RNA sequence: GGGAACGACUCGAGUAGAGUCGAAAAGAGUAGUAGUUCGCUACUACUCAAAGGCACAAAAGGCACAGUUCUAAAGUGCAAGGAACACGCCAAGUGCCCGUGAAAGUAAAUCCUUCGGGAUUUACAAUACGUAAUUCGAGUUCGCUCGAAUUACGUAAAAAGAAACAACAACAACAAC
Reactivity to 2A3 in 0.01 (KOAc 150mM, MgCl2 10mM, bicine 150mM(pH8.5), 24C), signal-to-noise 2, nucleotides 027 to 126: g020a010g000u000a000g010u000a000g000u030u040c200g020c100u020a000c000u010a000c000u000c000a020a010a010g020g000c010a010c020a000a130a040a160g030g000c010a020c030a070g010u050u000c030u150a130a070a090g290u300g100c050a080a070g030g010a020a000c020a000c040g010c000c010a120a000g000u000g020c000c000c030g060u110g130a140a020a000g000u010a030a000a000u010c010c020u030u060c140g070g000g000a000u010u000u000a000c000a030a020
Reactivity to DMS in 0.01 (KOAc 150mM, MgCl2 10mM, bicine 150mM(pH8.5), 24C), signal-to-noise 3, nucleotides 027 to 126: g000a000g010u020a000g030u000a010g010u000u000c220g030c010u000a000c000u000a000c010u000c000a000a070a110g000g000c000a010c000a110a030a180a230g020g000c000a080c120a210g010u000u010c010u000a080a070a140g030u000g030c250a090a190g000g020a020a040c000a160c150g000c000c020a080a300g000u000g000c000c000c130g010u000g000a080a100a100g000u010a020a000a050u000c000c000u000u020c200g020g040g000a010u000u010u000a000c000a170a110
This 177-nucleotide RNA was probed chemically with 2A3 and DMS. 2A3 adducts were read by reverse transcription with SuperScript II with manganese. High 2A3 reactivity points to a flexible backbone, as in loops and unpaired stretches. The data come from the RNA Mapping Database (RMDB), library M2PK50. Reactivities are given for positions 27 through 126. The RNA was probed in 150 mM KOAc, 10 mM MgCl2 and 150 mM bicine (pH 8.5) at 24 C.